The data come from the RNA Mapping Database (RMDB), library M2PK50. This 177-nucleotide RNA was probed chemically with DMS and 2A3. For 2A3, 3,274 sequencing reads were counted.

RNA sequence: GGGAACGACUCGAGUAGAGUCGAAAAGCGUUUAGCUUCGGCUAAACGCAAAUAAGCUGACCAGCAAUGAGGUCAUACAUCGUCAUAGCACAAAGAAAGAGAAAACACCUCUGUUCGCAGAGGUGAAGGACAGAUGAUAGUUCGCUAUCAUCUGUCCAAAAGAAACAACAACAACAAC
Reactivity to DMS in 0.01 (KOAc 150mM, MgCl2 10mM, bicine 150mM(pH8.5), 24C), signal-to-noise 2, nucleotides 027 to 126: g020c000g000u000u020u000a020g030c000u000u030c210g030g010c000u010a000a000a000c000g050c020a000a000a060u010a100a190g000c140u000g000a050c000c000a150g010c090a110a080u000g000a120g000g000u000c030a080u010a010c150a040u020c090g010u010c030a040u010a030g020c010a070c180a040a090a110g010a020a070a130g010a130g000a020a030a110a120c010a010c000c000u000c000u000g000u010u020c140g000c000a000g000a000g000g000u000g000a030a060
Reactivity to 2A3 in 0.01 (KOAc 150mM, MgCl2 10mM, bicine 150mM(pH8.5), 24C), signal-to-noise 3, nucleotides 027 to 126: g010c000g000u000u000u000a000g000c010u040u030c230g070g000c000u000a000a000a000c010g010c000a020a000a000u040a010a010g120c040u030g010a010c010c000a000g000c040a020a090u150g020a060g010g000u010c030a030u110a150c050a110u150c100g040u020c020a050u040a050g070c060a020c040a070a140a000g150a090a120a000g130a030g060a010a120a020a020c010a000c010c000u000c000u010g040u070u080c190g010c080a010g000a010g000g000u000g000a000a000
Background:
The reactions ran in a buffer of 150 mM KOAc, 10 mM MgCl2 and 150 mM bicine (pH 8.5), at 24 C.